[RMDB]
RNA sequence: GGGAACGACUCGAGUAGAGUCGAAAAGGGAGGUAGGCGGGACGAUCACCUAGGACUGCAAGCAAAUCUCUUGGGUGGCAGGACCCCCUGUGUGCUGUAGCAGAACUACAACCUCUCCCGCCGUUAGAGGCGUAUAUUACUUCGGUAAUAUACGCCUAAAAGAAACAACAACAACAAC
Reactivity to DMS in 0.01 (KOAc 150mM, MgCl2 10mM, bicine 150mM(pH8.5), 24C), signal-to-noise 8, nucleotides 027 to 126: g010g010g010a080g010g010u010a080g010g020c040g010g000g020a090c170g010a050u010c030a090c190c150u000a020g010g010a180c030u000g030c060a090a080g010c070a040a090a120u010c080u010c050u010u000g010g010g040u010g020g000c120a150g020g000a300c020c010c010c020c010u000g000u000g010u000g020c060u000g000u010a050g000c020a050g010a030a280c010u000a010c090a050a140c130c100u000c040u000c000c000c010g020c020c010g010u010u010a060g000
Reactivity to 2A3 in 0.01 (KOAc 150mM, MgCl2 10mM, bicine 150mM(pH8.5), 24C), signal-to-noise 4, nucleotides 027 to 126: g050g020g020a050g040g050u170a070g010g020c040g000g010g000a020c080g010a060u060c020a040c040c010u010a000g010g020a020c030u040g020c050a060a090g030c020a030a120a210u070c060u020c020u090u030g020g010g000u150g050g000c060a110g080g120a300c000c000c000c000c020u000g020u020g020u030g010c010u020g010u060a020g010c020a010g000a100a010c010u020a010c030a050a050c010c010u000c010u000c000c000c000g010c010c010g000u010u050a070g010